The record gives the reactivity of an RNA of 207 nucleotides to 2A3 and DMS.
RNA sequence: GGGAACGACUCGAGUAGAGUCGAAAACGUACGUGGAGACACGUACGACGAGACUUCGGUCUCGAAUCGGGCGGAGAUUAGGCGCCCUCGUGUUAGGAGUCGGUUGUCGGCGAGCCAACGGACUCAAGAGCUAACACGAUAUAUUAGGCCUGAUCGGGCUUCACUAGAAAUUCGUUUCUAGUGAAGCAAAAGAAACAACAACAACAAC
Reactivity to 2A3 in 0.01 (KOAc 150mM, MgCl2 10mM, bicine 150mM(pH8.5), 24C), signal-to-noise 2, nucleotides 027 to 156: c000g000u000a000c000g000u000g010g000a030g000a020c000a000c010g000u000a000c000g010a000c010g020a000g010a000c010u040u040c150g130g010u000c010u000c010g010a020a070u070c030g010g000g020c010g010g030a100g000a040u000u010a010g010g010c010g020c000c000c020u020c000g020u000g000u000u000a000g010g000a000g010u000c040g060g010u080u000g030u010c020g010g140c140g030a000g010c010c010a000a000c010g110g000a000c000u030c000a010a010g140a020g110c000u000a000a000c000a000c000g010a000u000a000u000a010u000u180a020g000g020c000c000u000g000a000u010c000g010g020
Reactivity to DMS in 0.01 (KOAc 150mM, MgCl2 10mM, bicine 150mM(pH8.5), 24C), signal-to-noise 2, nucleotides 027 to 156: c010g020u000a000c000g050u000g020g000a300g000a300c010a000c000g020u000a010c000g010a070c040g010a220g000a010c020u000u030c200g040g000u000c010u020c010g000a040a030u000c010g040g010g030c010g020g010a140g020a060u000u000a030g010g000c020g010c060c020c040u000c030g040u000g000u000u000a010g000g010a030g020u010c020g040g010u000u000g020u010c010g010g020c120g010a290g030c200c010a030a020c040g010g000a080c000u000c010a070a080g020a230g010c020u020a020a030c020a080c000g010a030u000a080u000a060u000u010a100g000g030c010c000u000g000a000u000c010g020g030
Background
The 2A3 profile rests on 1,835 reads. For DMS the reverse transcriptase was MarathonRT.